RNA sequence: GGGAACGACUCGAGUAGAGUCGAAAACACUGAAUUUGCAAAUGGGAUGAGCCAGAAAUAGAGAUUUGCUAUUUUGUCAGUGGUGACAGUUACCAGUGAGCUGGUAAUAUUCAAGUCACUGGAGGUCGCCACUAGGAACGUUCGCGUUCCUAGUGGCAAAAGAAACAACAACAACAAC
Reactivity to 2A3 in 0.01 (KOAc 150mM, MgCl2 10mM, bicine 150mM(pH8.5), 24C), signal-to-noise 2, nucleotides 027 to 126: c040a010c000u030g010a040a080u030u000u170g000c030a020a040a090u150g010g040g050a070u070g050a070g080c000c020a030g120a050a140a050u140a020g130a000g070a070u000u040u060g060c000u000a090u070u040u110u060g130u040c040a010g000u030g020g020u040g010a010c050a040g080u050u050a110c020c000a030g020u030g050a040g100c000u010g040g000u030a090a050u130a040u110u080c050a020a020g020u000c000a000c030u000g040g010a030g000g060u050c050
Reactivity to DMS in 0.01 (KOAc 150mM, MgCl2 10mM, bicine 150mM(pH8.5), 24C), signal-to-noise 1, nucleotides 027 to 126: c020a100c050u020g000a090a030u020u010u000g000c020a040a040a020u000g030g020g010a150u010g020a090g000c040c050a180g000a030a070a020u010a040g000a150g010a080u000u000u020g010c000u010a020u000u000u000u010g000u020c080a020g040u000g000g030u010g000a020c030a050g010u000u010a090c000c000a010g030u000g010a090g000c000u000g030g000u010a050a050u020a120u020u000c100a050a090g020u010c010a010c010u000g000g010a120g030g000u010c080
Description
The record gives the reactivity of an RNA of 177 nucleotides to 2A3 and DMS. Values are in units of 0.01, from 0 to 300, in steps of 10. Values cover nucleotides 27 to 126. For DMS, 1,082 sequencing reads were counted. For DMS the reverse transcriptase was MarathonRT.